[RMDB]
RNA sequence: GGGAACGACUCGAGUAGAGUCGAAAAGAUAUGGAUCAGGAGUUGAGCACCACAGUUAUGCUGUCGAAUUCGGAAACGAAUUCGACAGCAUAACUGUGAAGUGCAAUGAUGCUCUGAUCCUAAGUCAUCUGAUUUAAAGGUUCGCCUUUAAAUCAGAAAAAGAAACAACAACAACAAC
Reactivity to DMS in 0.01 (KOAc 150mM, MgCl2 10mM, bicine 150mM(pH8.5), 24C), signal-to-noise 1, nucleotides 027 to 126: g000a050u010a300u000g000g010a000u000c010a020g020g010a110g000u010u010g000a200g000c000a010c000c000a000c010a010g000u000u000a000u000g010c000u000g010u000c000g030a060a000u020u000c020g000g010a050a060a300c040g030a030a000u000u000c000g030a000c020a000g020c000a000u000a000a010c020u000g000u000g000a020a100g040u000g010c000a120a100u020g010a180u000g000c020u000c000u000g020a000u010c000c000u000a050a100g000u020c040a100